[RMDB]
An RNA of 177 nucleotides, treated with 2A3 and DMS and read out base by base. Reactivities are given for positions 27 through 126. High DMS reactivity at an A or C suggests that its Watson-Crick edge is free. The RNA was probed in 150 mM KOAc, 10 mM MgCl2 and 150 mM bicine (pH 8.5) at 24 C. For 2A3 the reverse transcriptase was SuperScript II with manganese. As a SHAPE reagent, 2A3 marks flexible, mostly unpaired nucleotides at the ribose 2'-OH.

RNA sequence: GGGAACGACUCGAGUAGAGUCGAAAAGACAUUGAGCCGAAAGGUAAAGACCCCGAGAGGCCCAAGUGUCCUCUAGACAUAUUUACCGCCAGUUCUUCACCGUAGACCUUAUUCACUACUCCUGGCAGCUACACCAAGAUUUCGAUCUUGGUGUAGCAAAAGAAACAACAACAACAAC
Reactivity to 2A3 in 0.01 (KOAc 150mM, MgCl2 10mM, bicine 150mM(pH8.5), 24C), signal-to-noise 1, nucleotides 027 to 126: g040a030c010a060u060u050g000a030g010c040c010g090a110a010a020g000g000u050a170a130a000g070a060c060c020c000c010g050a000g040a010g080g020c000c000c020a130a080g130u100g010u080c000c030u020c020u030a080g090a110c040a060u170a090u120u140u090a070c000c030g010c020c010a000g020u040u040c000u030u070c050a070c120c060g040u040a060g070a100c050c010u100u140a100u130u090c050a040c060u060a020c030u050c000c010u030g020g060c010a020
Reactivity to DMS in 0.01 (KOAc 150mM, MgCl2 10mM, bicine 150mM(pH8.5), 24C), signal-to-noise 1, nucleotides 027 to 126: g010a010c180a070u000u000g010a130g000c020c030g010a120a180a110g010g010u020a040a100a080g010a150c140c060c030c020g000a040g000a090g000g000c000c000c060a100a090g020u000g030u000c010c070u010c010u000a080g010a010c080a130u010a150u000u000u000a070c060c050g000c120c010a050g010u010u020c070u000u000c000a050c060c090g000u010a040g000a120c090c090u020u000a130u000u000c100a040c020u010a030c090u000c030c030u000g010g040c130a140